Source information:
The record gives the reactivity of an RNA of 177 nucleotides to DMS and 2A3. The data come from the RNA Mapping Database (RMDB), libraries RFM100 and RFMREP. The reactions ran in a buffer of 150 mM KOAc, 10 mM MgCl2 and 150 mM bicine (pH 8.5), at 24 C.
RNA sequence: GGGAACGACUCGAGUAGAGUCGAAAAGGCGGCGCCGAUAACGAUGUCGACGCCGGGCUGGAUGUCCGGGUUGCCGGCCUUGCCGAUGGCGGCGAUGCGGCCGUUCUUGAGCGCGAGGUCGGCCUUGCAAACCUGCUCAGUUCGCUGAGCAGGUUUGAAAAGAAACAACAACAACAAC
Reactivity to DMS in 0.01 (KOAc 150mM, MgCl2 10mM, bicine 150mM(pH8.5), 24C), signal-to-noise 3, nucleotides 027 to 126: g010g000c020g020g000c010g010c040c020g010a020u000a060a180c300g000a180u050g010u000c010g010a030c010g020c010c000g000g010g010c010u000g000g020a250u020g000u010c020c020g020g000g010u010u010g000c000c000g010g000c000c000u000u000g020c000c000g000a180u000g000g000c010g000g010c000g010a120u040g000c230g000g000c030c000g010u000u040c040u040u010g000a300g020c210g010c010g000a020g000g010u000c000g020g010c060c000u020u010g000
Reactivity to 2A3 in 0.01 (KOAc 150mM, MgCl2 10mM, bicine 150mM(pH8.5), 24C), signal-to-noise 3, nucleotides 027 to 126: g050g030c010g000g010c020g000c020c010g010a010u110a120a110c240g150a160u260g030u020c010g000a010c020g000c010c010g000g000g000c030u050g020g100a140u170g040u000c010c000g000g060g000u180u230g000c000c000g000g000c000c000u000u010g000c010c000g020a040u060g010g000c000g000g010c030g020a110u300g090c090g080g000c010c000g030u100u120c040u080u120g050a060g020c100g030c030g000a000g010g010u000c000g000g020c000c000u010u050g000